RNA sequence: GGGAACGACUCGAGUAGAGUCGAAAAGAAUAUAAGAGCGCAGUAAUUGUGAGAGCAAACUGCGCCCGGACUGUAGGAUCCGGUGGCACAGCAACGCUCACUCACAAAACGCUGUGCCACAUGAAGAGCCAUAGUCCGUAUUCGUACGGACUAUGGCAAAAGAAACAACAACAACAAC
Reactivity to DMS in 0.01 (KOAc 150mM, MgCl2 10mM, bicine 150mM(pH8.5), 24C), signal-to-noise 1, nucleotides 027 to 126: g030a090a080u060a040u060a040a120g000a190g030c000g000c000a000g000u000a060a300u000u020g030u020g040a260g000a050g000c000a040a120a040c000u000g040c010g000c000c040c000g000g000a020c030u000g100u010a100g000g000a090u000c000c000g150g010u000g000g000c010a000c050a000g000c000a080a080c060g040c160u000c100a090c300u030c160a090c150a000a010a000a080c190g000c000u000g050u020g000c000c000a000c000a020u000g030a060a080g010a200
Reactivity to 2A3 in 0.01 (KOAc 150mM, MgCl2 10mM, bicine 150mM(pH8.5), 24C), signal-to-noise 3, nucleotides 027 to 126: g000a060a010u190a020u060a090a010g020a050g010c000g000c000a000g000u070a220a180u110u050g010u000g040a070g000a000g090c070a000a000a070c000u000g000c010g000c020c000c000g000g000a010c000u120g070u180a060g120g150a100u000c000c000g010g000u010g000g020c000a000c000a000g020c060a000a190c050g020c030u020c030a030c060u080c000a080c030a040a100a030a010c060g000c000u010g010u000g000c020c000a020c010a010u170g080a090a050g020a020
Source: RMDB library OK1LIB, as collected in RNAgym. Chemical mapping of a 177-nucleotide RNA with DMS and 2A3. The RNA was probed in 150 mM KOAc, 10 mM MgCl2 and 150 mM bicine (pH 8.5) at 24 C. Values cover nucleotides 27 to 126. For 2A3, 1,899 sequencing reads were counted.